Structure probing data (2A3 and DMS) for a 177-nucleotide construct. Values cover nucleotides 27 to 126. For DMS the reverse transcriptase was MarathonRT.
RNA sequence: GGGAACGACUCGAGUAGAGUCGAAAAGAUAUGGAUGUUGAUCGAUAAGCUGUCUGGUCGGAAACGACCAGCAGCUUUUGACGACAACAUCCUAAGUCAAACCAGAGAAGCUUCGGCUUCUCUGGAACACCUAGAUACGGUUCGCCGUAUCUAGGUGAAAAGAAACAACAACAACAAC
Reactivity to 2A3 in 0.01 (KOAc 150mM, MgCl2 10mM, bicine 150mM(pH8.5), 24C), signal-to-noise 3, nucleotides 027 to 126: g010a010u040a010u130g000g010a000u010g000u010u030g150a300u040c020g000a060u030a300a120g000c000u020g130u300c010u010g060g000u000c000g010g010a020a040a040c000g010a000c000c000a000g010c000a000g000c000u010u010u000u010g000a020c010g000a000c000a010a000c000a010u000c000c000u010a040a010g000u010c050a080a100a150c010c000a000g010a000g000a010a010g020c030u150u260c300g060g000c000u000u000c130u010c000u020g000g000a010a010
Reactivity to DMS in 0.01 (KOAc 150mM, MgCl2 10mM, bicine 150mM(pH8.5), 24C), signal-to-noise 4, nucleotides 027 to 126: g010a020u000a250u010g010g000a010u000g010u000u000g000a120u000c000g010a150u000a020a040g020c000u000g000u030c010u000g000g010u000c000g020g010a080a070a110c000g010a030c000c000a010g000c000a000g010c000u000u000u010u000g010a150c070g000a050c000a000a010c000a010u000c000c000u000a000a040g010u000c030a090a160a280c000c000a010g000a010g000a020a000g010c000u000u010c280g020g020c010u000u000c000u000c000u020g000g000a050a080